[RMDB]
RNA sequence: GGGAACGACUCGAGUAGAGUCGAAAACCGUCUGCGACUGAAGGACAAAGAACGCCGGGGGAAAGCACCCCACCGAGCCCCACCCCUCCCGCCCGUGGUCGCACUCACUCGGGCGGGUGAACAUCCCCUCCGUUUAAAGAUUCGUCUUUAAACGGAGAAAAGAAACAACAACAACAAC
Reactivity to DMS in 0.01 (KOAc 150mM, MgCl2 10mM, bicine 150mM(pH8.5), 24C), signal-to-noise 2, nucleotides 027 to 126: c010c030g020u040c080u010g010c060g020a090c020u020g000a090a100g010g000a100c040a080a090a190g010a120a230c110g000c050c020g030g030g000g010g020a100a070a180g000c040a060c030c030c030c020a020c070c050g010a070g000c010c010c020c060a110c040c000c060c010u010c000c000c000g030c000c030c010g000u010g010g000u000c070g020c070a050c040u010c020a090c010u000c010g010g000g010c000g000g000g000u020g000a060a130c160a080u010c060c010c010
Reactivity to 2A3 in 0.01 (KOAc 150mM, MgCl2 10mM, bicine 150mM(pH8.5), 24C), signal-to-noise 3, nucleotides 027 to 126: c010c000g030u040c030u050g030c010g060a040c060u090g060a090a040g030g010a040c040a070a190a010g050a120a050c040g020c040c040g020g000g000g020g030a050a110a050g040c020a090c010c000c000c000a000c000c010g020a010g010c010c000c000c020a020c000c010c010c000u030c000c000c000g000c000c000c010g010u050g010g010u070c050g020c060a040c020u090c020a040c010u000c000g010g000g000c000g000g000g000u010g000a020a030c020a080u030c010c010c000